[RMDB]
Chemical mapping of a 177-nucleotide RNA with 2A3 and DMS. DMS (dimethyl sulfate) methylates the pairing face of unpaired adenines and cytosines. For 2A3 the reverse transcriptase was SuperScript II with manganese.
RNA sequence: GGGAACGACUCGAGUAGAGUCGAAAAGAAAGAGCCCUACGGAUGUGCCACAUGGUCUGUUUCCUUGUACAAGUUCGCACGGGUUAGGCGGGGUUGUAGGGCGGCUCCUUCAACCUCGCCGCUUAAACUUUGUAGAUCUCUUCGGAGAUCUACAAAGAAAAGAAACAACAACAACAAC
Reactivity to 2A3 in 0.01 (KOAc 150mM, MgCl2 10mM, bicine 150mM(pH8.5), 24C), signal-to-noise 5, nucleotides 027 to 126: g130a010a100a000g100a010g020c000c000c010u030a030c040g030g010a050u060g030u080g100c060c030a060c010a090u100g060g020u060c090u080g120u100u120u080c020c000u020u030g020u030a050c040a120a130g020u020u040c010g000c030a040c090g030g000g030u130u100a070g000g000c000g000g000g000g000u000u020g000u050a000g000g040g000c070g050g010c060u130c010c000u010u020c000a010a000c000c000u000c000g000c000c000g000c010u010u010a000a010a010
Reactivity to DMS in 0.01 (KOAc 150mM, MgCl2 10mM, bicine 150mM(pH8.5), 24C), signal-to-noise 4, nucleotides 027 to 126: g010a060a100a120g000a110g000c030c000c020u010a150c070g010g000a050u010g010u000g020c100c060a050c080a050u000g000g020u010c090u030g010u010u020u000c000c020u010u020g000u020a080c110a080a140g010u010u010c030g010c030a020c140g000g000g000u000u020a050g010g020c000g000g010g010g000u000u000g010u010a020g020g030g020c250g000g010c170u020c000c000u000u010c010a010a010c000c000u000c010g010c000c000g010c050u020u000a060a050a170